[RMDB]
RNA sequence: GGGAACGACUCGAGUAGAGUCGAAAACAGGUUUGUACGACGAGCCAUAUUUAUGUUUGGAGUGUACCAACACGUGUGUAUAUAUGCAUACGUAUAUAAUAUGUACGUAUUUGCAUAUGCAACUACAGCCAGGUACCCAGUUCGCUGGGUACCUGGCAAAAGAAACAACAACAACAAC
Reactivity to 2A3 in 0.01 (KOAc 150mM, MgCl2 10mM, bicine 150mM(pH8.5), 24C), signal-to-noise 1, nucleotides 027 to 126: c010a010g000g030u030u030u030g000u000a000c000g120a040c080g000a300g250c000c030a030u100a060u000u300u070a180u300g300u000u000u040g000g040a130g000u000g000u000a040c000c000a000a000c250a080c010g040u000g010u000g000u010a000u010a000u000a000u210g060c000a000u000a000c000g000u000a000u040a000u000a040a260u110a030u100g000u000a040c000g000u000a000u060u050u250g000c000a000u000a060u000g080c040a010a030c060u070a030c080a010
The record gives the reactivity of an RNA of 177 nucleotides to 2A3. Values cover nucleotides 27 to 126. 2A3 adducts were read by reverse transcription with SuperScript II with manganese. Conditions: 150 mM KOAc, 10 mM MgCl2 and 150 mM bicine (pH 8.5), 24 C.